Structure probing data (DMS and 2A3) for a 177-nucleotide construct.
For 2A3, 3,975 sequencing reads were counted.
For DMS, 1,327 sequencing reads were counted.
As a SHAPE reagent, 2A3 marks flexible, mostly unpaired nucleotides at the ribose 2'-OH.
[RMDB]
RNA sequence: GGGAACGACUCGAGUAGAGUCGAAAAGAUAUGGAAAUGAGGUGGGAGAACCCUGUCGGAAACGACAGUGAGUUCGAAGAACACCACAUUUCCUAAGUCAAAAGCACCGAGGUUCGCCUCGGUGCAACCUCAUUGUCAUCUUCGGAUGACAAUGAGGAAAAGAAACAACAACAACAAC
Reactivity to DMS in 0.01 (KOAc 150mM, MgCl2 10mM, bicine 150mM(pH8.5), 24C), signal-to-noise 1, nucleotides 027 to 126: g000a010u000a010u010g000g000a020a030a000u020g000a080g030g020u000g000g000g050a080g020a010a000c000c000c000u000g000u020c020g000g000a000a010a030c000g030a020c040a010g030u010g000a160g040u000u000c000g020a160a190g000a130a120c000a020c000c000a100c000a000u010u010u000c000c000u000a010a030g000u000c000a100a130a200a120g030c000a030c000c000g000a050g020g000u000u030c290g010c000c000u000c020g000g000u000g010c000a000a040
Reactivity to 2A3 in 0.01 (KOAc 150mM, MgCl2 10mM, bicine 150mM(pH8.5), 24C), signal-to-noise 1, nucleotides 027 to 126: g010a000u000a000u080g000g000a010a010a000u010g010a050g020g000u010g010g030g090a300g000a030a000c010c020c000u010g020u000c000g000g000a010a000a000c000g000a010c000a000g010u040g080a190g030u010u010c000g020a110a080g100a020a000c020a000c000c000a020c010a030u000u000u000c010c000u010a000a000g020u000c020a090a000a050a190g000c010a010c010c000g000a020g060g000u110u230c300g110c090c000u000c020g030g010u010g000c000a000a020